[RMDB]
RNA sequence: GGGAACGACUCGAGUAGAGUCGAAAAAUUAACCCAGCCUAAAUGAAGAGCAGGACAAAAGGUUCGUCUGCAAACACUCCAUGGUAGACAGAGGAAGGGGAAAUGGAUGUGGACUAUUUGGAAGUAACAAUAUGCCAAUCUUCGGAUUGGCAUAUUGAAAAGAAACAACAACAACAAC
Reactivity to 2A3 in 0.01 (KOAc 150mM, MgCl2 10mM, bicine 150mM(pH8.5), 24C), signal-to-noise 2, nucleotides 027 to 126: a010u070u060a050a040c010c000c000a010g030c000c020u130a140a140a070u170g070a070a070g020a000g060c030a010g060g000a030c060a040a170a040a010g110g000u090u050c040g010u000c040u030g020c040a040a060a020c040a010c020u020c030c010a040u040g010g040u050a030g020a100c050a030g060a020g030g020a020a030g000g010g000g030a000a010a090u050g020g000a010u090g030u040g010g050a030c010u030a160u130u070u040g070g050a070a030g010u030a090a010
Reactivity to DMS in 0.01 (KOAc 150mM, MgCl2 10mM, bicine 150mM(pH8.5), 24C), signal-to-noise 4, nucleotides 027 to 126: a080u010u000a130a110c000c000c000a180g010c050c050u010a040a090a080u010g020a090a080g010a130g020c060a050g020g010a060c080a070a050a060a080g010g020u000u000c080g010u000c010u000g020c050a060a080a070c120a070c060u000c040c020a070u000g010g020u000a050g010a050c080a060g010a110g000g010a060a040g020g000g010g010a020a020a050u000g010g010a070u000g020u000g010g000a070c120u000a060u000u000u000g010g010a040a050g000u010a110a110